[RMDB]
RNA sequence: GGGAACGACUCGAGUAGAGUCGAAAACGAUGACAACGCAAACGGAAAGCGAACAGGCGGUUUUGGUAGCACUGGGGAGUUGUGAUGGACAAUAAAAGAAUUUCUGAAAUCGUUGAAGAAGAAAUGAUAAAGCAAGAUGCAAACAGAUAUCGUGAUAUCACUGACCUAAUUUCGAUUAGGUCAGUGAAAAAGAAACAACAACAACAAC
Reactivity to 2A3 in 0.01 (KOAc 150mM, MgCl2 10mM, bicine 150mM(pH8.5), 24C), signal-to-noise 3, nucleotides 027 to 156: c030g070a070u120g020a020c040a060a010c110g040c070a130a000a000c060g030g030a040a020a040g010c000g020a070a030c000a050g060g030c070g000g010u000u020u030u050g070g000u040a010g030c010a020c070u040g030g030g000g010a070g030u030u000g020u060g050a060u060g030g020a030c040a080a070u150a070a070a030a040g080a040a070u070u080u040c020u020g040a070a050a050u080c070g010u040u070g020a010a020g040a020a010g030a000a110a040u140g050a070u100a070a040a000g060c060a050a000g010a020u070g020c030a030a060a040c030a040g100a110u030a080u130c070g010u020g060a010u050a000
Reactivity to DMS in 0.01 (KOAc 150mM, MgCl2 10mM, bicine 150mM(pH8.5), 24C), signal-to-noise 3, nucleotides 027 to 156: c050g000a130u010g010a120c040a130a130c080g000c070a040a130a120c080g020g000a050a110a140g040c030g000a140a100c050a130g000g010c030g050g010u020u000u000u000g000g020u000a060g030c050a070c040u010g020g010g040g010a100g020u010u000g010u010g000a130u000g010g000a100c040a070a090u000a050a070a080a090g010a090a120u000u000u010c020u020g010a110a070a110u000c050g020u000u020g010a100a130g000a150a070g000a070a060a080u000g010a080u020a070a050a080g040c060a080a050g020a100u000g000c050a050a100a100c050a090g010a130u000a050u000c030g000u010g000a100u000a120
The record gives the reactivity of an RNA of 207 nucleotides to 2A3 and DMS. The DMS profile rests on 4,625 reads. The reactions ran in a buffer of 150 mM KOAc, 10 mM MgCl2 and 150 mM bicine (pH 8.5), at 24 C. The data come from the RNA Mapping Database (RMDB), library OK3TST.